[RMDB]
RNA sequence: GGGAACGACUCGAGUAGAGUCGAAAACGCGAGAGGGUUGGAGCACCUCGGCACACAGAUUUCCGGCUGACAUUGCCUCCCCACUAAGAUCUCGCCAAUAGUGCUCAUUACAUGCCUCCUUCAGGAGAAGUACGUCCUACUUCGGUAGGACGUACUUAAAAGAAACAACAACAACAAC
Reactivity to DMS in 0.01 (KOAc 150mM, MgCl2 10mM, bicine 150mM(pH8.5), 24C), signal-to-noise 2, nucleotides 027 to 126: c080g010c000g020a170g000a060g000g000g010u000u000g000g010a060g000c150a110c030c110u020c150g000g000c060a040c100a130c170a000g000a050u000u000u000c000c020g010g000c000u000g040a080c190a020u030u040g000c000c000u040c000c050c030c000a040c170u020a090a130g000a010u020c060u020c050g000c000c080a030a180u070a050g040u000g010c000u000c050a030u020u020a100c150a090u050g000c150c010u000c050c000u000u000c070a100g000g030a150g020
Reactivity to 2A3 in 0.01 (KOAc 150mM, MgCl2 10mM, bicine 150mM(pH8.5), 24C), signal-to-noise 2, nucleotides 027 to 126: c130g020c010g010a060g020a020g060g050g010u080u250g080g000a030g010c050a010c020c010u000c040g000g000c050a010c000a000c030a020g040a100u020u070u080c000c000g050g000c010u040g050a050c000a060u020u110g080c020c030u000c000c030c010c000a030c050u080a030a080g020a110u020c030u020c070g010c000c000a040a050u010a080g060u060g100c000u020c050a040u050u170a110c010a080u140g080c020c000u000c010c030u080u030c020a130g000g050a080g010
Chemical mapping of a 177-nucleotide RNA with DMS and 2A3. For 2A3 the reverse transcriptase was SuperScript II with manganese. The 2A3 profile rests on 1,172 reads. For DMS, 1,609 sequencing reads were counted. High 2A3 reactivity points to a flexible backbone, as in loops and unpaired stretches. It was measured as part of the RMDB library OK1LIB.